[RMDB]
RNA sequence: GGGAACGACUCGAGUAGAGUCGAAAAAAAAGGAUCAAGGUGGCGAAGCCCGUGGUGGAGAUGGAUGGUGAUGAGAUGACCCGUAUUAUCUGGCAGUUCAUCAAGGAGAAGGUAGUGCCCCCUCCUGCUGUUACCCAAUCUUCGGAUUGGGUAACAGAAAAGAAACAACAACAACAAC
Reactivity to DMS in 0.01 (KOAc 150mM, MgCl2 10mM, bicine 150mM(pH8.5), 24C), signal-to-noise 1, nucleotides 027 to 126: a010a010a020a120g000g010a080u000c060a050a040g000g000u000g000g000c060g010a110a150g000c040c020c040g030u010g010g030u010g010g000a040g000a080u020g010g020a030u000g040g020u000g020a070u000g010a060g010a050u000g010a180c050c030c050g050u010a120u000u000a150u010c080u010g010g000c010a060g010u010u010c050a030u000c070a070a080g000g010a080g010a080a060g010g010u000a020g030u010g000c060c000c030c020c010u000c020c000u010g000